Chemical mapping of a 207-nucleotide RNA with 2A3 and DMS.
DMS adducts were read by reverse transcription with MarathonRT.
The data come from the RNA Mapping Database (RMDB), library OK3TST.
For 2A3, 716 sequencing reads were counted.

[RMDB]
RNA sequence: GGGAACGACUCGAGUAGAGUCGAAAAAGCCGGAACCAUCGCCCCUGCGAGCCCAAAGAAAAUAUCAAUAUCAUCGCGAGCAAGCAUUUUCGUAUAAAUAUCAACCGCGGUAUCCAUCGAAGCGGCGCCAAUCCCUGCGUGUUCAUAUUCGCUUGCGAGUGUUAUGUACCUUCGGGUACAUAACACUAAAAGAAACAACAACAACAAC
Reactivity to 2A3 in 0.01 (KOAc 150mM, MgCl2 10mM, bicine 150mM(pH8.5), 24C), signal-to-noise 2, nucleotides 027 to 156: a010g080c070c010g000g040a060a000c030c000a090u140c050g040c020c020c000c080u050g010c080g000a000g080c040c040c020a050a130a010g100a020a100a060a000u190a030u100c080a130a040u090a070u250c050a040u140c020g000c020g030a000g000c010a040a040g020c010a020u030u110u130u030c060g010u090a030u080a190a080a020u160a040u040c040a030a000c000c000g000c020g030g010u040a040u100c030c000a010u030c060g010a090a000g020c060g010g010c010g010c000c000a050a030u040c000c000c010u000g050c030g000u080g040u020u000c010a010u020a060u100u140c040g000c010u000u000g020c000g010
Reactivity to DMS in 0.01 (KOAc 150mM, MgCl2 10mM, bicine 150mM(pH8.5), 24C), signal-to-noise 1, nucleotides 027 to 156: a210g010c020c030g000g050a060a090c010c030a110u000c020g000c000c000c030c030u000g010c070g000a110g030c000c040c020a090a120a130g000a080a070a060a060u010a120u000c120a090a120u000a130u010c070a110u000c050g080c020g000a120g050c040a070a060g040c050a110u000u000u000u000c150g010u020a120u020a130a060a080u000a040u020c090a050a030c030c020g000c040g040g000u000a070u000c060c020a140u020c050g010a070a060g010c060g060g010c050g000c030c030a050a100u010c000c010c010u020g040c000g030u000g020u050u000c070a070u000a200u000u000c100g030c020u000u000g000c080g000